Chemical mapping of a 177-nucleotide RNA with 2A3 and DMS.
[RMDB]
RNA sequence: GGGAACGACUCGAGUAGAGUCGAAAAGACACGACGGAGACGUCGUGUCAAGUCCAGUGCGAAAGCACUGGACAAAUAAGGGCUGUUCUUCUCGCUGACUAUCAGCCCCAAACAAAACAUGUCAGCAAGUCCAUUACUCAUUCGUGAGUAAUGGACUAAAAGAAACAACAACAACAAC
Reactivity to 2A3 in 0.01 (KOAc 150mM, MgCl2 10mM, bicine 150mM(pH8.5), 24C), signal-to-noise 2, nucleotides 027 to 126: g010a000c000a000c000g010a000c010g000g010a060g020a030c000g000u000c010g010u000g000u000c000a000a000g000u000c000c000a010g010u010g000c000g070a120a020a020g000c000a000c000u000g000g000a000c000a010a030a000u080a050a050g000g010g000c010u010g030u030u030c060u110u030c080u070c100g010c010u000g000a000c010u020a010u060c010a000g010c000c000c010c050a040a060a010c030a030a020a010a010c040a020u120g020u020c000a000g000c020a010
Reactivity to DMS in 0.01 (KOAc 150mM, MgCl2 10mM, bicine 150mM(pH8.5), 24C), signal-to-noise 2, nucleotides 027 to 126: g000a010c000a000c020g000a000c010g000g000a230g000a250c010g020u000c000g010u010g020u000c000a060a100g010u000c000c000a010g010u000g000c000g000a130a130a110g000c000a010c000u010g010g000a000c000a010a010a050u010a110a150g000g000g010c020u000g000u000u000c090u000u000c140u010c140g000c000u000g010a010c000u020a030u000c000a020g000c010c000c000c190a010a010a190c090a030a000a070a030c150a020u000g000u000c010a000g030c000a160
The RNA was probed in 150 mM KOAc, 10 mM MgCl2 and 150 mM bicine (pH 8.5) at 24 C. Reactivities are given for positions 27 through 126. For 2A3, 4,379 sequencing reads were counted.